An RNA of 177 nucleotides, treated with DMS and 2A3 and read out base by base.
Reactivities are given for positions 27 through 126.
The RNA was probed in 150 mM KOAc, 10 mM MgCl2 and 150 mM bicine (pH 8.5) at 24 C.
The 2A3 profile rests on 3,152 reads.
Reactivities are rounded to 0.1 and cut off at 0 and 3.
The DMS profile rests on 2,976 reads.
The data come from the RNA Mapping Database (RMDB), library M2PK90.

[RMDB]
RNA sequence: GGGAACGACUCGAGUAGAGUCGAAAAUAUAUAUAGUUCGUUCUAUUAACGAACACGCGCGGGUCGUCGGUGGUCGGCGAGCCCACGGACGAACUUACUCGCGCGAACGAGUAAAAAUCGCCAGGAAUCAAAAUAGUAGGUUCGCCUACUAUUUUGAAAAAGAAACAACAACAACAAC
Reactivity to DMS in 0.01 (KOAc 150mM, MgCl2 10mM, bicine 150mM(pH8.5), 24C), signal-to-noise 3, nucleotides 027 to 126: u010a100u010a160u010a180u010a110g010u000u000c000g010u000u010c240u010a150u000u000a070a020c010g010a020a010c000a180c040g010c000g010c020g000g000g000u000c000g020u010c000g010g060u000g000g010u000c020g000g010c020g000a030g000c290c000c000a010c010g010g000a020c010g010a110a100c120u000u010a130c000u000c000g000c000g010c050g000a020a040c170g000a100g000u010a010a050a030a080a040u000c010g000c010c010a220g000g010a120a120
Reactivity to 2A3 in 0.01 (KOAc 150mM, MgCl2 10mM, bicine 150mM(pH8.5), 24C), signal-to-noise 2, nucleotides 027 to 126: u130a000u000a000u000a020u060a110g000u000u010c010g020u040u000c140u140a300u290u170a070a010c010g000a010a010c020a010c020g010c000g000c000g000g010g040u050c010g000u010c070g190g010u020g000g000u050c060g000g020c010g000a010g020c010c000c010a000c000g060g000a000c010g000a030a000c020u070u110a050c000u040c010g000c000g000c000g000a010a010c050g000a020g010u050a000a120a050a030a040u010c010g000c020c010a070g060g120a050a120